RNA sequence: GGGAACGACUCGAGUAGAGUCGAAAAUUUACAUCAGCUACUAUAAUUAUUGCUAUUCCAACUGGCGUAAAAGUCUUUAGUUGACUAGCUACCCUUCAUGGCGGUAAUAUUAAAUGAUCCCCCGCUAUACAAGAGUCUAAUUCGUUAGACUCUUGUAAAAAGAAACAACAACAACAAC
Reactivity to 2A3 in 0.01 (KOAc 150mM, MgCl2 10mM, bicine 150mM(pH8.5), 24C), signal-to-noise 2, nucleotides 027 to 126: u050u030u080a010c000a040u100c020a020g030c010u060a040c020u090a090u130a300a130u290u140a030u120u190g000c010u020a000u080u060c110c000a000a010c020u030g020g000c070g000u030a010a050a090a090g010u000c010u070u200u050a030g020u040u000g000a020c010u020a010g050c020u030a030c000c010c000u000u070c070a050u080g050g020c020g000g010u030a080a030u120a060u190u260a130a060a100u120g080a060u030c020c000c000c000c000g000c000u050a060
Reactivity to DMS in 0.01 (KOAc 150mM, MgCl2 10mM, bicine 150mM(pH8.5), 24C), signal-to-noise 3, nucleotides 027 to 126: u010u010u000a090c080a050u000c050a100g020c080u010a050c070u000a050u010a070a060u010u000a090u010u010g000c020u010a050u000u000c100c060a040a050c060u010g000g000c050g000u000a050a080a090a190g010u000c020u010u000u000a060g010u000u000g010a050c090u000a040g010c040u000a130c070c020c040u000u000c160a080u000g000g020c060g010g010u000a030a050u010a060u000u000a030a060a070u000g010a120u010c020c020c000c090c040g010c100u000a110